Structure probing data (2A3 and DMS) for a 170-nucleotide construct. For 2A3 the reverse transcriptase was SuperScript II with manganese. The DMS profile rests on 6,503 reads.

RNA sequence: GGGAACGACUCGAGUAGAGUCGAAAAGUUACGUGACUGUGAUGCUGUAGCUCCCCAUGAUUUCUUCAUCUUUGAUGUAGACAAAGUUAAAACACCUCAUAUUGUACGUCAGCGUUUAACUGAGUACUCACGGGCUGGUUCGCCAGCCCGAAAAGAAACAACAACAACAAC
Reactivity to 2A3 in 0.01 (KOAc 150mM, MgCl2 10mM, bicine 150mM(pH8.5), 24C), signal-to-noise 2, nucleotides 027 to 129: g010u000u000a040c080g040u020g060a010c000u000g070u120g100a100u060g000c000u000g000u000a000g030c000u080c000c000c000c000a090u160g120a200u020u140u050c000u040u060c000a050u000c030u010u000u240g000a000u060g010u040a030g000a000c090a080a120a060g040u140u150a050a060a000a000c040a030c050c080u020c010a030u180a040u120u130g000u010a000c000g270u030c000a030g000c030g050u180u210u040a000a000c000u000g000a000g000u040a000c000u000c030a020
Reactivity to DMS in 0.01 (KOAc 150mM, MgCl2 10mM, bicine 150mM(pH8.5), 24C), signal-to-noise 2, nucleotides 027 to 129: g000u030u020a010c030g060u010g020a030c090u050g030u080g080a090u020g030c020u000g010u000a060g000c000u000c030c010c020c010a080u020g010a150u000u000u000c030u040u000c030a030u000c030u000u000u000g040a000u040g000u060a000g010a070c170a050a090a010g010u050u020a120a010a200a040c070a100c090c040u020c040a000u070a050u000u000g020u000a000c120g040u030c000a130g020c110g000u080u000u000a000a150c020u010g020a080g020u010a030c030u010c040a060